[RMDB]
RNA sequence: GGGAACGACUCGAGUAGAGUCGAAAAGCAUCGACGACGGUCAUGCCAUGAGACCGUAACGAGGACAUGUCGCCUCGAAUGGCGUCGGGGAGCCGGCAGCUUACCCCAAGGAUGAGCGCCUAAUGCCUAUACCCGAUUCGCUUCGGCGAAUCGGGAACUAGAUUAAGGUCUUCGGACCUUAAUCUAGAAAAGAAACAACAACAACAAC
Reactivity to 2A3 in 0.01 (KOAc 150mM, MgCl2 10mM, bicine 150mM(pH8.5), 24C), signal-to-noise 2, nucleotides 027 to 156: g040c000a060u160c050g070a040c030g000a000c000g020g000u000c000a040u160g130c100c000a160u160g080a040g010a060c000c000g030u000a030a030c000g000a010g020g050a040c040a120u230g020u110c070g030c010c000u000c000g020a020a070u140g020g000c010g000u030c040g000g000g000g000a010g040c030c030g080g000c050a010g010c020u020u210a280c000c000c000c020a030a030g080g000a080u110g080a000g030c010g020c000c030u120a170a070u130g000c010c010u060a080u050a160c000c000c000g000a000u000u010c010g000c000u030u020c180g110g000c010g010a000a000u000c000g000g020g000a000a000